Background:
The data come from the RNA Mapping Database (RMDB), library RFM100. The record gives the reactivity of an RNA of 177 nucleotides to 2A3 and DMS.

RNA sequence: GGGAACGACUCGAGUAGAGUCGAAAACCCCCACCUUGACUCACCAGAUGGCUUCCUAAGUAUUGACAUUGAUGUGAUAAAUUCUUUGAAAGAAGUUUCAUGACCAUGAAAAGUGAAAAGAGAAAUGACUUUCGAUGCAUUUCGAUGCAUCGAAAGUAAAAGAAACAACAACAACAAC
Reactivity to 2A3 in 0.01 (KOAc 150mM, MgCl2 10mM, bicine 150mM(pH8.5), 24C), signal-to-noise 3, nucleotides 027 to 126: c000c000c000c010c020a040c000c020u010u060g020a040c000u010c000a040c040c000a020g000a150u050g020g000c020u020u000c000c010u050a100a050g070u090a100u140u090g030a030c120a070u100u140g060a070u130g080u000g030a010u120a140a090a020u100u040c010u030u100u050g130a100a090a040g000a000a000g030u000u140u000c010a000u070g040a140c010c080a040u080g030a040a000a000a100g040u000g030a010a080a050a040g100a020g030a080a040a030u100g010
Reactivity to DMS in 0.01 (KOAc 150mM, MgCl2 10mM, bicine 150mM(pH8.5), 24C), signal-to-noise 1, nucleotides 027 to 126: c010c000c000c060c080a210c100c060u010u030g030a160c070u040c010a060c030c080a010g000a080u010g040g030c000u000u000c040c020u000a140a080g010u010a020u050u000g000a190c160a170u000u000g020a060u000g000u000g000a080u000a060a010a070u010u000c000u000u000u000g000a070a110a000g000a030a140g000u000u010u000c000a030u000g000a190c240c110a090u000g000a050a120a070a140g000u000g010a130a070a060a060g000a080g040a030a170a000u030g000
Reactivities are rounded to 0.1 and cut off at 0 and 3. For DMS the reverse transcriptase was MarathonRT. The RNA was probed in 150 mM KOAc, 10 mM MgCl2 and 150 mM bicine (pH 8.5) at 24 C.